[RMDB]
RNA sequence: GGGAACGACUCGAGUAGAGUCGAAAAUCGUUGCGUUGCCAUCGAACGAAAAUUAUAAAUUUUUUCGUACGCCACGGUAUGGAAACGGGUAUUUUGUAGAUUUGACUGUUUGUGCACGAUUCAUCGCUACCGCUGUUUUCCACGAGUCGACUGUCGCAAGGAGAACCAUAUUCGUAUGGUUCUCCUUAAAAGAAACAACAACAACAAC
Reactivity to DMS in 0.01 (KOAc 150mM, MgCl2 10mM, bicine 150mM(pH8.5), 24C), signal-to-noise 3, nucleotides 027 to 156: u000c010g020u000u000g030c020g060u000u010g010c040c060a180u020c010g000a120a080c020g010a020a030a030a040u000u000a300u010a070a070a120u010u000u000u000u000u000c010g030u000a070c060g000c080c070a110c080g000g010u000a170u000g010g020a030a050a040c060g000g020g010u000a030u000u000u000u000g000u000a110g010a110u000u000u000g020a080c040u000g000u000u000u000g020u010g000c000a050c040g010a120u000u000c100a070u000c030g000c050u010a040c030c020g000c040u000g000u000u010u010u000c020c060a070c030g010a130g000u000c010g030a100c050u000g000u000c050g000c130
Reactivity to 2A3 in 0.01 (KOAc 150mM, MgCl2 10mM, bicine 150mM(pH8.5), 24C), signal-to-noise 3, nucleotides 027 to 156: u020c010g000u000u060g040c030g030u040u110g090c020c010a090u060c060g060a020a010c010g000a020a000a020a040u150u110a150u250a220a220a240u100u020u010u000u000u000c010g000u010a020c010g000c010c030a020c030g010g030u040a070u090g030g030a000a070a020c000g020g010g020u010a090u040u190u120u140g110u080a140g040a140u050u040u170g040a050c010u040g170u190u110u110g190u270g020c030a000c070g040a030u030u090c030a020u030c070g040c030u030a010c000c030g150c230u140g020u050u050u050u010c000c010a010c020g000a000g000u020c030g000a050c040u050g030u270c110g000c120